[RMDB]
RNA sequence: GGGAACGACUCGAGUAGAGUCGAAAAGUCGUAGUUCGGAUUGCGGAUUGAAACUCAUCCGCAUGAAGCUGGAUUCGGUAGUAAUCGCGCCUCAGAAGGGCGCGGUGAAUACGUCCCUGCUCCUUGCACGCUGGAAACACUUCGGUGUUUCCAGCGUAAAAGAAACAACAACAACAAC
Reactivity to DMS in 0.01 (KOAc 150mM, MgCl2 10mM, bicine 150mM(pH8.5), 24C), signal-to-noise 1, nucleotides 027 to 126: g030u020c080g000u010a000g030u000u000c040g030g000a230u000u000g010c000g000g000a000u080u010g040a050a090a110c300u000c180a020u000c010c000g070c030a000u010g000a190a110g040c070u000g000g010a020u000u000c000g000g000u000a010g020u000a270a000u000c000g000c000g010c010c020u000c040a260g010a130a300g000g000g000c000g030c000g000g030u000g010a180a090u040a050c030g030u030c000c010c000u000g010c010u010c060c010u030u030g000c300
Reactivity to 2A3 in 0.01 (KOAc 150mM, MgCl2 10mM, bicine 150mM(pH8.5), 24C), signal-to-noise 2, nucleotides 027 to 126: g070u030c020g030u040a010g030u090u150c020g010g000a010u010u010g020c000g020g020a000u000u080g210a140a080a030c110u160c050a050u010c000c000g040c000a000u020g010a030a050g020c020u030g000g010a090u030u010c000g020g000u030a010g000u010a010a000u010c000g000c000g040c030c000u060c010a210g050a200a070g010g010g000c000g060c000g020g000u000g000a000a020u090a050c000g040u090c000c000c010u000g050c000u030c030c000u000u090g000c060
Chemical mapping of a 177-nucleotide RNA with DMS and 2A3. Conditions: 150 mM KOAc, 10 mM MgCl2 and 150 mM bicine (pH 8.5), 24 C. The data come from the RNA Mapping Database (RMDB), library RFM100. For 2A3 the reverse transcriptase was SuperScript II with manganese. For 2A3, 969 sequencing reads were counted.